[RMDB]
RNA sequence: GGGAACGACUCGAGUAGAGUCGAAAACUUCUACGCUUCGGCGUAGAAGAAAGGUGUUUGUCGCUCCACCAAAAUCGAUGCGAUAAAAAGUACGAAAGUACAAAACGCGAAUCUUCGGAUUCGCGAACACUAUGACUGUCUUCGGACAGUCAUAGUGAAAAGAAACAACAACAACAAC
Reactivity to 2A3 in 0.01 (KOAc 150mM, MgCl2 10mM, bicine 150mM(pH8.5), 24C), signal-to-noise 3, nucleotides 027 to 126: c000u000u010c000u000a010c000g010c020u020u080c240g180g000c000g000u000a010g000a000a000g010a000a010a000g000g000u020g000u030u120u200g020u000c000g000c000u000c000c000a000c000c010a180a030a010a030u150c090g010a040u180g000c000g000a000u020a030a150a020a000a000g010u010a010c020g050a150a030a030g010u020a010c000a010a110a010a020c020g000c000g000a000a000u000c000u030u060c170g120g000a000u010u000c000g000c000g000a010a000
Reactivity to DMS in 0.01 (KOAc 150mM, MgCl2 10mM, bicine 150mM(pH8.5), 24C), signal-to-noise 2, nucleotides 027 to 126: c010u000u000c000u000a030c000g010c000u010u000c110g030g000c000g020u000a010g000a010a010g000a050a070a080g000g000u010g000u000u000u010g020u000c000g010c000u010c000c000a020c000c010a090a070a020a010u010c100g010a030u000g060c010g000a000u000a080a040a070a130a070g000u000a010c000g000a160a090a200g000u000a030c010a060a030a090a130c020g030c000g020a000a010u000c020u000u010c120g020g000a010u000u000c000g010c000g000a030a110